[RMDB]
Structure probing data (2A3) for a 207-nucleotide construct. 2A3 adducts were read by reverse transcription with SuperScript II with manganese. For 2A3, 2,854 sequencing reads were counted.

RNA sequence: GGGAACGACUCGAGUAGAGUCGAAAAGGGGUCUCUCCCAACAGCGUGUCGGAGCGAGGAUCGUACUGAAGCCUCCACGGUACGGGAGCUCCGUGACACGACAUGGGAGAGACGGAGGCACCCAAAACUAGCAUCAUGCUUCGGCAUGAUGCUAGAACUUUUCUGUUGUCUUCGGACAACAGAAAAGAAAAGAAACAACAACAACAAC
Reactivity to 2A3 in 0.01 (KOAc 150mM, MgCl2 10mM, bicine 150mM(pH8.5), 24C), signal-to-noise 2, nucleotides 027 to 156: g000g030g100g020u010c000u000c020u000c000c040c050a190a080c130a080g100c010g010u000g010u010c010g000g000a000g000c000g010a300g030g020a000u000c000g010u000a000c000u030g040a120a020g020c000c000u000c000c010a000c000g000g000u000a000c010g010g000g000a000g000c000u010c060c000g030u070g040a000c000a010c000g020a070c030a210u300g000g000g000a010g000a000g000a000c000g000g000a000g000g000c010a030c000c010c010a020a070a000a040c000u000a000g010c000a000u010c010a000u000g020c000u080u040c210g010g000c000a000u010g000a000u000g010c000u010a000g000a000a000